[RMDB]
RNA sequence: GGGAACGACUCGAGUAGAGUCGAAAACGGUUACGCCUUCUUUACCGUUAUCAAGGAAGGUACUCGGCCAUGCUAAGGGAAGCAUUAUUCCUUAGGCGCACGUCGCCGCCAGCAUGGUGUGAGGGGAAAAAGUAUGCUGGGUUCGCCCAGCAUACAACAUAAAUUAACCCUUCGGGGUUAAUUUAUGAAAAGAAACAACAACAACAAC
Reactivity to 2A3 in 0.01 (KOAc 150mM, MgCl2 10mM, bicine 150mM(pH8.5), 24C), signal-to-noise 7, nucleotides 027 to 156: c010g000g020u020u030a030c060g020c000c000u000u010c010u030u030u030a020c010c010g240u120u090a050u100c070a000a000g040g000a010a000g000g010u040a050c010u010c010g040g000c000c000a000u000g010c010u050a060a070g020g000g010a020a010g020c070a210u120u140a120u200u110c010c000u050u080a060g010g000c000g000c010a120c170g290u290c030g040c020c000g010c030c030a000g000c000a000u000g000g050u060g140u150g030a030g010g030g010g060a020a150a010a000a030g000u000a000u000g000c000u000g010g000g040u040u090c200g080c020c000c000a000g000c000a000u000a000c000a000a000
Reactivity to DMS in 0.01 (KOAc 150mM, MgCl2 10mM, bicine 150mM(pH8.5), 24C), signal-to-noise 3, nucleotides 027 to 156: c030g020g020u000u000a040c040g000c010c000u000u000c010u010u000u000a030c010c010g020u000u000a030u000c090a020a030g000g020a030a020g000g000u000a050c010u000c010g020g000c010c010a030u000g010c010u000a160a150g010g020g010a040a060g030c200a210u000u000a150u000u000c020c000u000u000a120g030g030c010g020c050a110c160g010u000c020g010c020c020g030c110c080a060g000c000a040u000g010g020u020g010u000g010a070g000g010g000g010a050a070a080a120a180g010u000a010u000g030c000u010g000g010g010u000u010c300g000c000c000c000a010g020c020a000u000a000c000a080a200

Background:
Source: RMDB library M2RFPK, as collected in RNAgym. Structure probing data (2A3 and DMS) for a 207-nucleotide construct. DMS adducts were read by reverse transcription with MarathonRT. For 2A3, 9,194 sequencing reads were counted.